[RMDB]
RNA sequence: GGGAACGACUCGAGUAGAGUCGAAAACGUCGUGAACUAGCGACAAUGCCGUAGAUCUAUCGUUAUCUAACCGAAACAUCGUGACUAGUCGUAGAAUAGAACCAGGAGAGGCCGCUGGCAAACAAAGACGGGGUCUCAUAUUCGUAUGAGGCCCCGUAAAAGAAACAACAACAACAAC
Reactivity to 2A3 in 0.01 (KOAc 150mM, MgCl2 10mM, bicine 150mM(pH8.5), 24C), signal-to-noise 2, nucleotides 027 to 126: c000g000u000c020g010u020g070a070a070c070u040a060g040c000g050a020c010a000a040u080g000c010c010g110u110a060g000a160u000c040u040a140u080c060g040u120u030a040u020c050u020a010a090c040c000g030a010a080a010c040a050u120c000g080u060g030a060c030u020a030g030u050c040g010u020a050g030a130a080u080a050g050a020a000c000c010a010g010g020a090g000a020g010g000c010c000g000c030u020g020g010c030a090a060a010c030a020a150a030g120
Reactivity to DMS in 0.01 (KOAc 150mM, MgCl2 10mM, bicine 150mM(pH8.5), 24C), signal-to-noise 2, nucleotides 027 to 126: c080g060u000c070g020u020g000a120a130c150u070a190g020c020g020a040c020a030a070u020g010c000c000g000u010a100g000a110u020c070u000a140u000c100g000u000u000a000u020c010u020a150a120c090c050g000a110a060a160c130a100u010c000g000u010g000a060c020u020a090g040u010c110g000u020a040g020a050a080u000a060g020a100a100c050c020a070g000g000a030g010a050g010g010c000c050g020c050u000g000g010c030a010a090a070c090a050a150a030g000
Chemical mapping of a 177-nucleotide RNA with 2A3 and DMS. It was measured as part of the RMDB library OK1LIB.